The record gives the reactivity of an RNA of 170 nucleotides to DMS and 2A3. High DMS reactivity at an A or C suggests that its Watson-Crick edge is free. For 2A3, 10,065 sequencing reads were counted. The reactions ran in a buffer of 150 mM KOAc, 10 mM MgCl2 and 150 mM bicine (pH 8.5), at 24 C.
[RMDB]
RNA sequence: GGGAACGACUCGAGUAGAGUCGAAAAUCAUGAGCAUGUUGGUGGUGUCUAUGACAACUCUAUCACAUGCCCAUUGACAGUUGCAGUAAUUGCUGGAGUUGCUGGUGCUCGCAUUCCAGACGUACCUACCCCAGGGUGUUCGCACCCUGGAAAAGAAACAACAACAACAAC
Reactivity to DMS in 0.01 (KOAc 150mM, MgCl2 10mM, bicine 150mM(pH8.5), 24C), signal-to-noise 3, nucleotides 027 to 129: u000c000a050u030g000a040g000c040a000u010g040u030u020g070g000u020g040g000u000g000u010c040u070a180u040g020a090c170a090a090c060u000c030u030a040u000c000a000c040a060u000g020c010c000c000a000u010u010g030a060c120a120g030u000u000g010c040a000g020u030a080a070u030u010g060c000u000g030g020a050g030u060u000g040c000u040g010g010u070g030c090u000c070g030c130a080u040u010c000c000a040g020a070c000g000u080a030c000c050u020a120c040c120
Reactivity to 2A3 in 0.01 (KOAc 150mM, MgCl2 10mM, bicine 150mM(pH8.5), 24C), signal-to-noise 2, nucleotides 027 to 129: u040c010a010u020g000a000g010c000a000u010g010u090u150g180g000u020g010g010u010g010u010c080u160a280u250g030a040c020a040a090c030u030c010u070a020u030c000a010c010a000u000g000c000c000c000a030u060u110g020a010c040a060g040u100u120g080c030a000g040u070a120a160u140u140g000c020u000g000g000a060g030u070u070g010c040u070g050g200u160g070c060u080c080g010c030a030u060u000c000c000a000g000a020c020g040u050a050c000c020u040a070c030c000